[RMDB]
RNA sequence: GGGAACGACUCGAGUAGAGUCGAAAAGAUAUGGACCAUUAUGGCAGCUAUAAUCUUAAUCGGAAACGAUUAAGGUAGCUGCAUACGGUGGUCCUAAGUCAAACUCUAUCAGUUCGCUGAUAGAGAACGAAUAUGUUGUGUUCGCACAACAUAUUCGAAAAGAAACAACAACAACAAC
Reactivity to DMS in 0.01 (KOAc 150mM, MgCl2 10mM, bicine 150mM(pH8.5), 24C), signal-to-noise 4, nucleotides 027 to 126: g020a040u000a300u000g000g000a000c000c010a000u000u000a170u010g010g000c000a010g030c000u000a070u000a300a210u000c000u000u000a000a000u000c000g030g000a150a090a260c000g010a020u000u000a010a000g020g010u000a010g000c000u000g010c000a020u000a030c300g010g000u000g010g010u010c000c000u000a000a090g010u000c040a140a130a230c000u000c000u000a010u000c010a020g010u000u000c300g030c010u000g000a010u000a000g000a020g010a040a120
Reactivity to 2A3 in 0.01 (KOAc 150mM, MgCl2 10mM, bicine 150mM(pH8.5), 24C), signal-to-noise 5, nucleotides 027 to 126: g030a020u070a040u180g010g010a000c020c020a010u040u040a200u300g120g000c000a010g000c020u070a060u080a300a300u180c010u000u000a010a000u000c010g070g010a090a060a060c020g000a000u010u000a000a010g000g020u010a000g000c000u000g000c000a000u020a010c030g040g000u000g000g000u000c000c000u020a110a000g010u000c030a060a030a150c010u000c000u000a000u000c000a010g050u080u180c300g060c140u010g010a000u010a000g010a000g010a010a020
Structure probing data (DMS and 2A3) for a 177-nucleotide construct. It was measured as part of the RMDB library TTRDES. The RNA was probed in 150 mM KOAc, 10 mM MgCl2 and 150 mM bicine (pH 8.5) at 24 C. For DMS, 4,614 sequencing reads were counted.